[RMDB]
RNA sequence: GGGAACGACUCGAGUAGAGUCGAAAAAAAAGAUAUGGACGGACUACCCACCGCAUACUGGUCUUGGAUUUAGCUUCGGAAACGAAGCUUGUCAGACCUAGUAUGCGAGGUCCGUCCUAAGUCAAAAUCAGAGAUCAUGGUUCGCCAUGAUCUCUGAAAAAGAAACAACAACAACAAC
Reactivity to DMS in 0.01 (KOAc 150mM, MgCl2 10mM, bicine 150mM(pH8.5), 24C), signal-to-noise 1, nucleotides 027 to 126: a130a020a110a020g030a200u000a250u000g000g000a010c000g010g000a040c000u010a130c000c020c030a300c070c000g030c000a000u000a000c000u000g010g030u020c000u010u030g000g000a020u000u000u000a010g010c000u000u000c000g010g000a100a110a180c000g000a020a010g010c000u000u010g010u030c010a000g000a000c000c010u040a000g020u000a000u000g000c010g010a020g000g000u000c030c000g000u030c010c000u000a020a150g020u000c050a140a050a110a140